RNA sequence: GGGAACGACUCGAGUAGAGUCGAAAACUUGCCAUGUGCAUGAAGGAUGCUGGCCCAGGACAGGUGCUUGCAGAUGCUGAAGACCGCAGGCUCCAGUUCUCAUCCACUAGUGCGUGGGCUGAAUCAUGCUGAUGGUUUUGCUGCUUAGCUCUCCUGACCCUUCCUACUGGUUCGCCAGUAGGAAGGGAAAAGAAACAACAACAACAAC
Reactivity to 2A3 in 0.01 (KOAc 150mM, MgCl2 10mM, bicine 150mM(pH8.5), 24C), signal-to-noise 1, nucleotides 027 to 156: c010u020u100g030c010c000a090u020g070u060g040c000a000u040g000a030a080g090g020a050u100g000c030u100g050g000c000c090c010a000g040g010a010c030a070g000g060u000g010c010u000u000g000c010a020g010a300u200g090c130u210g050a110a050g040a110c050c080g040c090a050g010g000c000u010c000c000a000g010u000u000c020u020c010a040u060c050c010a010c070u110a060g110u020g150c170g040u020g000g000g040c030u030g070a040a050u030c030a030u060g020c000u110g090a070u020g010g020u020u040u050u280g060c010u050g050c010u160u250a010g020c000u020c000u000c060c040u010g030a050